An RNA of 207 nucleotides, treated with 2A3 and read out base by base.

RNA sequence: GGGAACGACUCGAGUAGAGUCGAAAAUAGAGAGCAAAUUAUACACACACGCAUCGUUUACUGUAAAUAUAUUUCAAGUUUAUUUUUAAUUUUCUCUCGGCAAAUACAACAUACUUUACAACGUUUUGCGCAUUCGGCACACGUCGAAACGUGACGAACACAUCGGGUGAUUCGUCACCCGAUGUGUAAAAGAAACAACAACAACAAC
Reactivity to 2A3 in 0.01 (KOAc 150mM, MgCl2 10mM, bicine 150mM(pH8.5), 24C), signal-to-noise 2, nucleotides 027 to 156: u100a010g010a000g000a010g020c020a030a000a030u140u010a070u170a070c150a010c010a000c010a010c050g080c070a080u140c080g030u110u130u070a070c010u000g000u120a030a150a000u130a190u040a180u120u180u120c050a080a050g030u000u040u070a170u060u130u050u060u100a030a060u000u020u030u000c000u050c000u000c000g000g010c030a080a130a080u120a100c050a130a020c010a060u120a090c050u170u230u150a060c010a090a040c040g000u000u010u040u040g000c020g020c030a050u090u140c040g020g000c040a040c000a000c070g000u010c020g060a000a090a050c030g000u000g010a020c020g050a000
Source: RMDB library OK3TST, as collected in RNAgym.